[RMDB]
RNA sequence: GGGAACGACUCGAGUAGAGUCGAAAAUUCGCAACCACCUUUACCGUAUCGACGGCACGACCGCCGCCGACGCCAAAGAUCAUGUCGGCUUGCUGCACUGUAGGCAUAGCGCACAGGGCGUCGACACAUUGUGCGCAACUUUCGAGUUGCGCACAAUAAAAGAAACAACAACAACAAC
Reactivity to 2A3 in 0.01 (KOAc 150mM, MgCl2 10mM, bicine 150mM(pH8.5), 24C), signal-to-noise 2, nucleotides 027 to 126: u030u000c010g000c030a050a060c000c000a020c010c000u130u120u010a060c020c030g050u030a040u160c040g040a060c000g030g000c010a000c070g200a070c000c140g000c020c020g000c000c000g060a010c000g000c010c010a100a150a030g100a060u090c040a060u080g020u030c050g060g010c010u000u090g040c010u000g080c010a080c220u160g010u080a040g030g040c030a050u140a050g080c100g030c020a010c000a000g060g000g080c010g000u060c020g000a000c010a000c010
Reactivity to DMS in 0.01 (KOAc 150mM, MgCl2 10mM, bicine 150mM(pH8.5), 24C), signal-to-noise 2, nucleotides 027 to 126: u000u000c050g010c050a120a130c110c030a090c110c120u070u000u030a110c090c080g070u020a080u000c050g000a040c060g000g010c070a060c140g030a130c140c120g000c040c070g010c070c020g010a030c030g000c060c060a010a090a100g000a140u000c090a090u000g020u000c040g000g010c020u000u030g010c080u000g000c120a080c080u010g010u000a070g020g010c070a050u000a090g060c010g020c040a060c090a090g000g010g040c010g020u000c040g000a030c070a110c190